[RMDB]
RNA sequence: GGGAACGACUCGAGUAGAGUCGAAAAUAUACGAUGAUCUUGGAAUCACUGAAGAUGUGCUAAACUAUGUUAAAUAUAAUGGAAACAAAGCACUUUCAAACUUAGGCUUUGAACCUUAUUUUGAGGAGUACCGGAGUUAAUUCGUUAACUCCGGUACAAAAGAAACAACAACAACAAC
Reactivity to 2A3 in 0.01 (KOAc 150mM, MgCl2 10mM, bicine 150mM(pH8.5), 24C), signal-to-noise 4, nucleotides 027 to 126: u220a010u020a030c040g080a080u130g000a010u000c040u100u090g040g030a090a010u050c010a030c050u040g020a010a050g090a180u110g080u000g040c040u070a070a100a040c070u050a070u130g070u130u080a100a190a050u150a040u070a030a140u110g030g050a050a130a010c030a000a080a000g000c000a030c000u070u150u090c130a080a050a030c020u060u060a010g000g030c010u010u020u160g040a020a020c020c000u010u050a040u050u130u030u110g100a090g020g060a040
Reactivity to DMS in 0.01 (KOAc 150mM, MgCl2 10mM, bicine 150mM(pH8.5), 24C), signal-to-noise 2, nucleotides 027 to 126: u000a070u000a050c140g000a100u000g000a040u000c020u010u020g000g000a120a080u000c010a100c020u030g000a100a060g000a070u010g000u020g010c070u020a070a050a080c080u000a060u020g000u030u030a070a050a050u120a010u020a070a040u040g020g000a130a030a090c030a060a000a000g000c000a050c050u000u020u040c170a070a050a080c180u010u020a090g000g000c030u000u010u000g010a020a200c010c000u020u010a020u000u000u000u000g000a070g010g060a210